[RMDB]
An RNA of 207 nucleotides, treated with 2A3 and DMS and read out base by base.
For DMS, 2,601 sequencing reads were counted.
For 2A3 the reverse transcriptase was SuperScript II with manganese.
Source: RMDB library RNAMAK, as collected in RNAgym.
For DMS the reverse transcriptase was MarathonRT.

RNA sequence: GGGAACGACUCGAGUAGAGUCGAAAAGUCUACUUCGGUAGACCAGAAGGGGUCUCGACAUGUAUACGCAAAGCCAUCGAUCCUGAAGCCUCCACGGGGGAGGCUUUGAAAUACAACAGCGAGACGGAGGCACCCGCAGCCGUCGCUUCGGCGACAAGUCACUAGUAAUUUUCGAAUUACUAGUGACAAAAGAAACAACAACAACAAC
Reactivity to 2A3 in 0.01 (KOAc 150mM, MgCl2 10mM, bicine 150mM(pH8.5), 24C), signal-to-noise 3, nucleotides 027 to 156: g000u020c000u000a000c010u030u080c190g080g020u000a000g000a010c000c010a080g140a120a080g050g020g010g010u010c000u000c020g090a100c050a150u100g040u030a040u030a070c190g000c150a000a010a000g000c020c010a180u220c120g090a170u140c010c000u010g020a050a030g010c000c000u000c010c010a030c010g010g000g000g030g020a020g010g000c020u000u010u000g000a010a020a000u070a010c030a110a000c020a040g070c000g010a010g010a000c010g000g000a010g000g030c020a060c020c000c020g010c010a020g120c080c090g020u000c000g000c010u070u110c210g100g000c000g000a010c010a000a030
Reactivity to DMS in 0.01 (KOAc 150mM, MgCl2 10mM, bicine 150mM(pH8.5), 24C), signal-to-noise 2, nucleotides 027 to 156: g000u020c010u000a000c020u000u020c210g050g030u010a000g000a030c000c020a050g020a150a120g010g020g030g010u000c030u000c000g000a070c080a300u020g000u000a070u000a110c160g050c020a040a020a060g040c010c030a130u000c110g010a060u000c000c000u010g020a050a130g010c030c000u000c000c010a300c090g050g060g000g030g010a030g000g000c000u000u010u020g010a110a120a090u000a060c050a030a130c040a120g020c020g020a070g000a050c010g010g000a050g040g050c050a180c030c050c030g030c090a200g020c030c000g000u010c010g000c050u020u000c160g010g000c040g020a030c010a050a300